Source: RMDB libraries RFM100 and RFMREP, as collected in RNAgym.
This 177-nucleotide RNA was probed chemically with DMS and 2A3.
In probing experiments dimethyl sulfate is read out at A N1 and C N3, which are open when not base-paired.
[RMDB]
RNA sequence: GGGAACGACUCGAGUAGAGUCGAAAAAGAUGCGUGCUUACGAGCACGCAUCAUGAAAUAAGUGGAGUAGUGGUCUCAUCGCUUAGUAUUAGAAAAGUGAGAUUCUACUUCUCCGACUUAAUUCAAAUCUAACGAAAUUGUUCGCAAUUUCGUUAGAAAAAGAAACAACAACAACAAC
Reactivity to DMS in 0.01 (KOAc 150mM, MgCl2 10mM, bicine 150mM(pH8.5), 24C), signal-to-noise 3, nucleotides 027 to 126: a090g000a000u010g000c010g030u000g000c000u000u020a100c170g010a060g000c020a010c000g000c010a000u000c000a060u030g000a010a030a060u000a010a000g010u010g000g020a010g020u000a010g010u010g000g000u000c000u000c010a070u000c030g030c040u000u000a070g030u000a250u030u010a160g010a090a070a050a030g000u000g010a030g000a010u000u000c010u000a000c030u000u000c000u000c000c000g000a020c000u010u000a010a030u000u000c030a030a130a130
Reactivity to 2A3 in 0.01 (KOAc 150mM, MgCl2 10mM, bicine 150mM(pH8.5), 24C), signal-to-noise 6, nucleotides 027 to 126: a010g000a010u010g000c000g020u000g010c010u070u050a060c290g080a040g000c000a000c000g010c010a000u000c000a000u010g000a000a010a010u030a000a000g000u000g000g000a000g000u020a000g000u010g020g000u000c000u000c020a300u020c040g000c010u030u030a040g120u160a300u230u180a150g210a100a200a020a000g000u010g010a010g000a000u020u010c000u010a000c000u000u020c010u000c000c010g060a040c000u010u020a040a060u030u010c010a020a010a110